[RMDB]
RNA sequence: GGGAACGACUCGAGUAGAGUCGAAAAGAACAGAGUGCCGCACUGGCUGCCCUGAUGAGAACAAACCCGUGACUAGCGUCGAAACAUCAACAGUGCGGGCUGUUGGUGUCGGUAGCCACUAAAAGAAAAAUAGGAUUAUGUUCGCAUAAUCCUAUUUAAAAGAAACAACAACAACAAC
Reactivity to DMS in 0.01 (KOAc 150mM, MgCl2 10mM, bicine 150mM(pH8.5), 24C), signal-to-noise 5, nucleotides 027 to 126: g010a080a110c100a070g000a080g020u000g010c010c020g000c060a060c070u010g000g030c030u010g000c010c010c020u000g010a070u010g010a110g000a100a060c120a050a050a100c130c100c030g020u000g000a100c070u030a060g000c050g010u040c060g000a150a090a050c020a010u000c010a020a030c040a030g020u020g010c110g010g000g000c010u000g000u000u010g000g010u000g020u010c020g010g000u010a030g010c020c040a040c090u030a050a030a100a120g010a030a070
Reactivity to 2A3 in 0.01 (KOAc 150mM, MgCl2 10mM, bicine 150mM(pH8.5), 24C), signal-to-noise 5, nucleotides 027 to 126: g050a070a030c050a040g060a000g090u040g030c000c000g040c040a040c090u050g030g000c010u040g040c010c000c000u080g090a140u090g040a080g040a060a010c040a030a050a010c010c010c000g010u040g030a050c060u050a020g050c020g030u070c050g130a120a050a000c010a010u020c000a000a050c010a030g050u090g230c030g010g160g000c000u000g000u000u000g020g020u010g020u090c030g050g020u000a010g020c010c000a030c020u100a060a050a010a050g150a010a160